[RMDB]
RNA sequence: GGGAACGACUCGAGUAGAGUCGAAAAACCAAGUCUGGGGGCCGAUGAGGGUUGGCUCAAAGUAGGGUUUUGACUUGAAUACUCAAGCUGUGACCCCAAAACGAUGGAGGUAAAUGAGAAUCCUCCUAAAACUAUGGACACUUCGGUGUCCAUAGAACGUACCCUUAAGGUUCGCCUUAAGGGUACGAAAAGAAACAACAACAACAAC
Reactivity to 2A3 in 0.01 (KOAc 150mM, MgCl2 10mM, bicine 150mM(pH8.5), 24C), signal-to-noise 4, nucleotides 027 to 156: a000c010c000a030a010g150u060c040u030g050g000g040g000g000c000c010g030a040u080g140a140g100g120g010u030u030g010g000c000u000c020a030a050a010g060u070a050g030g030g020u000u000u020u060g020a020c000u030u040g070a120a030u070a120c030u010c010a010a010g000c020u040g020u080g180a240c000c000c000c010a030a120a010a020c110g040a080u190g000g010a000g030g000u090a140a160a180u230g000a070g040a090a060u040c000c000u000c010c000u020a030a040a000a000c000u000a000u000g000g000a000c010a010c000u040u060c220g070g010u010g000u000c000c000a000u000a000g000a020a000
Reactivity to DMS in 0.01 (KOAc 150mM, MgCl2 10mM, bicine 150mM(pH8.5), 24C), signal-to-noise 1, nucleotides 027 to 156: a120c010c010a150a250g070u000c020u010g040g010g010g020g120c020c040g000a100u000g000a180g000g040g020u000u010g010g000c000u010c020a030a010a140g020u030a250g000g030g000u000u000u000u000g010a020c060u000u010g000a110a190u020a120c060u000c010a000a040g010c000u000g020u000g000a300c010c000c010c050a040a060a090a110c080g030a130u000g010g010a020g040g030u040a040a070a110u020g000a100g000a170a140u000c010c000u000c010c010u000a020a060a090a140c010u000a010u000g000g010a060c000a010c000u000u010c210g070g030u000g020u010c000c000a000u010a000g050a060a070
Structure probing data (2A3 and DMS) for a 207-nucleotide construct. 2A3 adducts were read by reverse transcription with SuperScript II with manganese. The DMS profile rests on 2,173 reads. It was measured as part of the RMDB library M2RFPK. The reactions ran in a buffer of 150 mM KOAc, 10 mM MgCl2 and 150 mM bicine (pH 8.5), at 24 C.